Annotation:
Chemical mapping of a 177-nucleotide RNA with DMS and 2A3. The reactions ran in a buffer of 150 mM KOAc, 10 mM MgCl2 and 150 mM bicine (pH 8.5), at 24 C. For 2A3 the reverse transcriptase was SuperScript II with manganese. The data come from the RNA Mapping Database (RMDB), library TTRDES.
RNA sequence: GGGAACGACUCGAGUAGAGUCGAAAAGAUAUGGAGCGUUAUUUCGCGAUAAGCUGUCACUCGGAAACGAGUGCAGCUUUUGACGCGAUUCACGCUCCUAAGUCAAACUCGUUGUUCGCAACGAGAACGGUUUUUAUUUGUUCGCAAAUAAAAACCGAAAAGAAACAACAACAACAAC
Reactivity to DMS in 0.01 (KOAc 150mM, MgCl2 10mM, bicine 150mM(pH8.5), 24C), signal-to-noise 3, nucleotides 027 to 126: g030a040u000a300u000g000g000a010g010c000g000u000u010a060u000u000u000c000g050c000g020a140u000a010a010g020c000u000g000u040c010a020c010u000c010g000g010a070a140a130c000g020a000g010u000g010c000a000g000c000u000u000u000u000g010a180c090g010c010g000a020u000u020c300a010c000g000c010u000c000c000u000a000a040g010u010c030a140a130a170c010u000c010g010u000u000g010u040u010c290g030c030a010a020c000g000a030g000a100a180
Reactivity to 2A3 in 0.01 (KOAc 150mM, MgCl2 10mM, bicine 150mM(pH8.5), 24C), signal-to-noise 3, nucleotides 027 to 126: g020a000u040a030u150g000g020a000g000c010g000u070u020a110u120u270u110c010g000c080g000a060u100a190a010g000c000u050g300u300c010a000c000u000c000g030g020a040a040a100c020g010a000g000u010g000c010a010g000c010u010u020u010u020g020a020c020g010c000g000a010u040u000c020a000c000g000c000u000c000c000u000a030a000g020u000c020a020a070a090c000u000c010g010u010u020g070u070u080c300g000c160a000a000c000g000a000g040a040a030